[RMDB]
RNA sequence: GGGAACGACUCGAGUAGAGUCGAAAAAUCGUGUCCAUGGUCGCAGACAGCCAGUUCUUCUGCAGCAGAAUUUCAUGCGCGUGGGCAUAGGCGUUGAUGCGCGCCGAUAUCGACUGCUCCGCAUCCUUCAUGCUGCCGGCGCUUCUCAACGACUGGCACUUUAAACGAAUUUCGAUUCGUUUAAAGUAAAAGAAACAACAACAACAAC
Reactivity to DMS in 0.01 (KOAc 150mM, MgCl2 10mM, bicine 150mM(pH8.5), 24C), signal-to-noise 5, nucleotides 027 to 156: a070u010c090g020u010g010u010c010c010a080u000g040g010u000c060g000c030a060g000a080c060a120g010c000c020a080g010u000u000c060u010u000c010u000g030c030a140g020c040a080g010a080a080u010u000u000c070a090u000g020c030g010c080g010u000g010g000g010c000a110u000a060g020g020c030g030u000u010g010a130u010g050c290g010c010g010c000c030g020a140u000a060u000c050g010a060c050u020g000c020u000c020c030g010c020a080u000c020c080u000u000c050a140u000g010c030u000g020c030c060g010g010c050g010c030u010u000c070u000c020a080a080c040g000a050c010u010g010g000c050
Reactivity to 2A3 in 0.01 (KOAc 150mM, MgCl2 10mM, bicine 150mM(pH8.5), 24C), signal-to-noise 9, nucleotides 027 to 156: a010u150c070g020u010g020u000c020c010a030u070g130g020u220c060g000c030a020g020a110c030a020g060c040c020a030g030u070u050c030u100u020c010u050g010c020a030g010c010a010g070a120a100u080u160u200c080a060u120g010c020g000c010g020u100g000g000g000c010a010u040a060g030g000c020g020u020u080g080a100u130g040c050g000c000g000c030c010g030a060u060a070u200c080g080a080c060u070g020c020u060c050c030g010c010a040u060c040c010u060u100c030a120u080g020c030u030g010c020c010g040g000c030g000c020u120u040c040u020c020a040a050c020g120a070c010u010g020g000c010